This 177-nucleotide RNA was probed chemically with DMS and 2A3. 2A3 is a SHAPE reagent: it acylates the 2'-hydroxyl of flexible nucleotides of all four kinds. Conditions: 150 mM KOAc, 10 mM MgCl2 and 150 mM bicine (pH 8.5), 24 C. For DMS, 1,902 sequencing reads were counted. Reactivities are rounded to 0.1 and cut off at 0 and 3. The data come from the RNA Mapping Database (RMDB), library TTRDEL. For 2A3, 3,652 sequencing reads were counted.

RNA sequence: GGGAACGACUCGAGUAGAGUCGAAAAGAUAUGGAUCCAGUAGGGAGAAGAUUCGGAAACGAAAUUUCAUCGAUCUACGGAUCCUAAGUCAAAUCCGGUGUAACAGGUUCGCCUGUUACACCGGAAACACUUGGUUACAGUUCGCUGUAACCAAGUGAAAAGAAACAACAACAACAAC
Reactivity to DMS in 0.01 (KOAc 150mM, MgCl2 10mM, bicine 150mM(pH8.5), 24C), signal-to-noise 2, nucleotides 027 to 126: g010a040u000a300u000g000g000a010u000c000c000a090g010u000a010g020g010g000a300g000a020a030g010a040u000u000c000g010g010a040a080a160c000g020a000a020a090u010u000u000c050a130u000c050g020a300u030c000u000a010c000g010g000a030u000c020c000u000a010a080g000u000c030a070a140a140u000c000c000g020g020u000g000u000a000a000c000a020g000g000u000u010c260g030c000c000u000g000u020u000a000c000a010c000c000g000g000a000a010a090
Reactivity to 2A3 in 0.01 (KOAc 150mM, MgCl2 10mM, bicine 150mM(pH8.5), 24C), signal-to-noise 2, nucleotides 027 to 126: g030a010u060a020u150g000g000a000u000c010c080a210g030u000a020g000g030g000a080g000a040a030g000a020u010u030c030g000g000a050a060a050c020g030a040a050a090u170u170u060c070a100u110c080g030a020u010c010u000a000c010g000g000a000u000c000c010u000a060a010g030u020c020a000a010a260u010c010c000g000g000u030g000u000a010a000c000a000g000g110u050u090c210g240c120c000u010g020u000u000a000c010a010c010c000g000g000a010a000a000